Chemical mapping of a 177-nucleotide RNA with DMS and 2A3. Reactivities are given for positions 27 through 126. The reactions ran in a buffer of 150 mM KOAc, 10 mM MgCl2 and 150 mM bicine (pH 8.5), at 24 C.

[RMDB]
RNA sequence: GGGAACGACUCGAGUAGAGUCGAAAAGAUAUGGAUCACCCAGCUUUUGACGGAGUGUCGGAAACGACACACCGAUAAGCUGAGGUGAUCCUAAGUCAAAACUGUUUCCCCUUCGGGGGAAACAGAACUUUCGGAUAGAGUUCGCUCUAUCCGAAAGAAAAGAAACAACAACAACAAC
Reactivity to DMS in 0.01 (KOAc 150mM, MgCl2 10mM, bicine 150mM(pH8.5), 24C), signal-to-noise 1, nucleotides 027 to 126: g000a040u000a300u000g000g000a000u010c000a000c000c000c020a010g000c000u000u000u010u000g010a200c060g020g010a090g020u010g000u000c000g000g000a080a050a190c010g000a010c000a020c000a030c000c000g000a110u000a010a020g020c000u000g000a090g000g020u000g000a000u000c010c000u000a010a050g000u010c050a070a060a150a130c000u000g010u000u000u000c000c000c000c000u000u000c140g030g020g040g010g000a000a000a010c010a000g030a080a120
Reactivity to 2A3 in 0.01 (KOAc 150mM, MgCl2 10mM, bicine 150mM(pH8.5), 24C), signal-to-noise 2, nucleotides 027 to 126: g020a010u070a040u100g000g000a000u000c000a000c000c000c020a000g010c040u230u200u210u300g200a100c020g000g040a040g000u010g000u000c000g040g020a050a040a030c000g010a000c000a000c020a010c000c000g100a120u050a240a060g000c000u010g030a250g040g000u040g000a000u000c000c000u000a010a020g020u000c020a010a000a130a220c000u000g000u000u000u000c030c000c010c000u030u160c300g070g000g000g030g000a000a030a000c010a010g000a020a020
DMS adducts were read by reverse transcription with MarathonRT. The DMS profile rests on 1,287 reads. Source: RMDB library TTRDEL, as collected in RNAgym.